[RMDB]
RNA sequence: GGGAACGACUCGAGUAGAGUCGAAAAAAGAAUGUUCAAAGACUUAUUGUCACAUAGCUGCUUCUAGCCUGGCCUUCUGGGCUUCAGCUCUGGAAGUUACAGUGCCACUUAAAGUCACUGCAGACAGCAACGGAUGCUUAUUCGUAAGCAUCCGUUGAAAAGAAACAACAACAACAAC
Reactivity to 2A3 in 0.01 (KOAc 150mM, MgCl2 10mM, bicine 150mM(pH8.5), 24C), signal-to-noise 2, nucleotides 027 to 126: a000a000g220a120a050u100g000u060u070c050a160a080a000g020a000c000u050u000a020u070u090g010u000c000a010c010a050u130a040g040c100u010g030c000u030u010c000u010a050g020c040c000u000g020g000c020c000u100u150c070u230g000g000g000c000u120u140c010a010g010c020u000c020u020g020g010a010a000g000u100u080a040c020a010g000u000g000c000c020a040c010u060u140a110a030a010g000u020c020a020c090u080g000c010a040g000a130c030a020g020
Reactivity to DMS in 0.01 (KOAc 150mM, MgCl2 10mM, bicine 150mM(pH8.5), 24C), signal-to-noise 3, nucleotides 027 to 126: a050a070g000a080a080u000g010u010u000c020a140a090a100g010a040c000u010u000a040u000u000g010u000c010a050c050a060u000a100g020c080u010g000c040u000u000c010u000a020g030c300c020u000g010g000c040c010u000u020c160u010g000g010g010c000u010u010c020a030g010c050u000c020u000g000g000a020a030g010u000u010a050c050a100g010u000g010c080c040a020c140u000u010a070a030a030g030u000c000a080c170u010g020c110a090g040a060c100a080g010
The data come from the RNA Mapping Database (RMDB), library OK2TST.
This 177-nucleotide RNA was probed chemically with 2A3 and DMS.
2A3 is a SHAPE reagent: it acylates the 2'-hydroxyl of flexible nucleotides of all four kinds.
DMS adducts were read by reverse transcription with MarathonRT.
The reactions ran in a buffer of 150 mM KOAc, 10 mM MgCl2 and 150 mM bicine (pH 8.5), at 24 C.
2A3 adducts were read by reverse transcription with SuperScript II with manganese.